[RMDB]
RNA sequence: GGGAACGACUCGAGUAGAGUCGAAAACGGUAUUGGUCAAGGCUAUACCGACAGCGCACCUUCAAAAGGGCGCUUAAUCCGCGGCCAAGCGCCGAAAUAUGAAUAGACACCGCUGGGCUGGUAGGGCAAAACAUGGCGAUCUUCGGAUCGCCAUGAAUCAUUAUUCUCGGUUCGCCGAGAAUAAUGAAAAAGAAACAACAACAACAAC
Reactivity to 2A3 in 0.01 (KOAc 150mM, MgCl2 10mM, bicine 150mM(pH8.5), 24C), signal-to-noise 2, nucleotides 027 to 156: c000g010g030u020a000u060u170g030g000u040c040a040a030g100g000c020u080a020u020a050c020c020g010a030c040a030g000c010g010c070a300c040c010u010u030c090a110a070a040a080g000g010g010c000g000c000u020u010a020a010u000c000c000g000c040g030g000c000c030a120a000g070c080g030c070c010g060a060a040a020u270a030u070g050a080a060u100a080g070a050c030a020c060c020g020c000u020g010g020g040c020u020g090g020u040a090g050g000g000c000a000a060a000a160c030a020u000g000g020c000g000a000u010c000u010u010c130g040g020a000u000c000g000c000c000a000u000g000a000a000
Reactivity to DMS in 0.01 (KOAc 150mM, MgCl2 10mM, bicine 150mM(pH8.5), 24C), signal-to-noise 1, nucleotides 027 to 156: c010g000g040u000a050u000u000g050g000u000c070a180a090g070g010c060u020a090u000a040c010c010g010a160c120a050g030c000g000c010a030c000c010u000u000c220a050a200a170a110g070g020g000c010g030c000u000u000a000a050u010c010c000g000c070g010g010c000c020a080a070g000c040g030c020c080g020a030a040a020u000a250u030g000a070a190u010a130g020a150c010a100c040c010g090c030u000g000g020g000c030u020g010g000u000a130g020g010g000c130a010a080a080a120c020a000u010g030g000c000g090a020u020c010u010u000c230g010g000a020u020c000g020c010c000a000u010g010a010a070